[RMDB]
An RNA of 177 nucleotides, treated with 2A3 and DMS and read out base by base. High DMS reactivity at an A or C suggests that its Watson-Crick edge is free. It was measured as part of the RMDB library M2PK90. DMS adducts were read by reverse transcription with MarathonRT. The reactions ran in a buffer of 150 mM KOAc, 10 mM MgCl2 and 150 mM bicine (pH 8.5), at 24 C. The 2A3 profile rests on 7,220 reads. High 2A3 reactivity points to a flexible backbone, as in loops and unpaired stretches.
RNA sequence: GGGAACGACUCGAGUAGAGUCGAAAACAAAAUAAUUUUUCGCCGCUGAGGCAUGCGCGUGCGCUCUGUCAGCAUCCCGAGCAGCGGGCGGAACGCACGCUCGUUCCCAACUCUACUCGAGAAAAAAGACUUAUAUUAAGUUCGCUUAAUAUAAGUCAAAAGAAACAACAACAACAAC
Reactivity to 2A3 in 0.01 (KOAc 150mM, MgCl2 10mM, bicine 150mM(pH8.5), 24C), signal-to-noise 4, nucleotides 027 to 126: c010a010a130a060a120u290a090a110u130u090u040u110u180c090g000c030c020g020c140u190g120a040g050g000c010a000u100g030c040g000c000g010u010g000c010g000c020u010c000u010g020u010c010a010g000c000a090u100c050c060c050g050a080g040c060a020g010c020g010g010g000c000g000g010a010a000c010g000c000a010c000g000c000u000c000g000u010u010c000c000c000a010a010c000u000c000u000a000c010u020c000g000a000g010a080a020a000a000a000a000
Reactivity to DMS in 0.01 (KOAc 150mM, MgCl2 10mM, bicine 150mM(pH8.5), 24C), signal-to-noise 3, nucleotides 027 to 126: c170a090a070a060a140u020a090a090u000u000u000u010u000c080g020c050c000g000c250u010g000a160g000g020c050a040u010g040c130g020c010g020u010g000c010g000c040u000c020u000g010u000c010a040g010c040a130u010c050c050c060g010a110g030c140a110g020c020g000g020g000c000g000g000a010a000c020g010c000a020c000g020c010u000c000g010u000u000c010c010c000a210a060c000u000c000u000a010c000u000c000g010a020g000a010a040a070a090a080a070